[RMDB]
RNA sequence: GGGAACGACUCGAGUAGAGUCGAAAACCUAAGAUCGGGAGUAGCAGGGCAUAGGUUGGAAGAGAAACCUUUUGUGAAAAUGAUUUCUGCUUACUGCUUUCUUUUUCCCUCAUUUUGUAGUAAUUAGACCAUUAAGUCUCUUCGGAGACUUAAUGGUAAAAGAAACAACAACAACAAC
Reactivity to DMS in 0.01 (KOAc 150mM, MgCl2 10mM, bicine 150mM(pH8.5), 24C), signal-to-noise 2, nucleotides 027 to 126: c050c090u010a050a050g010a070u010c160g010g010g010a050g010u000a030g000c070a010g010g010g000c040a010u000a020g010g010u010u020g020g020a160a130g010a190g020a060a040a020c010c010u000u000u010u020g020u030g000a060a030a070a100u000g000a080u000u000u000c000u000g010c000u000u000a070c030u010g010c000u010u000u000c010u000u000u000u030u000c000c000c010u010c130a100u000u000u000u000g010u010a110g010u000a070a150u010u000a090g010
The record gives the reactivity of an RNA of 177 nucleotides to DMS. The DMS profile rests on 1,521 reads. The RNA was probed in 150 mM KOAc, 10 mM MgCl2 and 150 mM bicine (pH 8.5) at 24 C. Values cover nucleotides 27 to 126. The data come from the RNA Mapping Database (RMDB), library RFMREP.